[RMDB]
RNA sequence: GGGAACGACUCGAGUAGAGUCGAAAAAAUUUUUUCGGUCUCGUCAGACAAAUCAGUGACAUGAUGGUCAUAGCGAAAGCACACGCACGAAAUGUCAGUGAUGAAAAAGUGCGUGUGACCAAUUUAAAGAAUUAAAGUAAUUCGUUACUUUAAUUCUAAAAGAAACAACAACAACAAC
Reactivity to 2A3 in 0.01 (KOAc 150mM, MgCl2 10mM, bicine 150mM(pH8.5), 24C), signal-to-noise 3, nucleotides 027 to 126: a000a000u170u030u010u000u040u120c040g030g000u020c010u010c030g040u050c040a020g020a040c020a030a300a020u050c010a010g040u000g080a020c030a070u070g000a020u050g020g040u030c020a070u130a010g010c000g040a110a050a000g000c020a000c000a000c020g040c000a010c000g040a130a020a050u110g030u040c000a030g040u030g140a090u070g000a040a060a000a020a000g010u010g010c000g000u000g010u000g000a000c000c000a010a030u100u160u220a110a190
Reactivity to DMS in 0.01 (KOAc 150mM, MgCl2 10mM, bicine 150mM(pH8.5), 24C), signal-to-noise 5, nucleotides 027 to 126: a070a060u020u010u010u000u010u000c070g010g000u000c040u000c050g000u000c140a080g010a040c030a030a080a040u000c030a030g020u000g010a100c130a090u010g010a050u000g000g010u000c020a040u010a160g010c030g000a050a050a100g020c070a060c010a010c000g010c000a000c000g000a060a130a090u000g000u000c010a020g000u010g010a140u000g000a030a020a040a140a250g000u000g000c000g020u000g010u000g010a030c010c030a060a070u010u000u010a070a110

Conditions: 150 mM KOAc, 10 mM MgCl2 and 150 mM bicine (pH 8.5), 24 C. Chemical mapping of a 177-nucleotide RNA with 2A3 and DMS. 2A3 adducts were read by reverse transcription with SuperScript II with manganese. DMS adducts were read by reverse transcription with MarathonRT.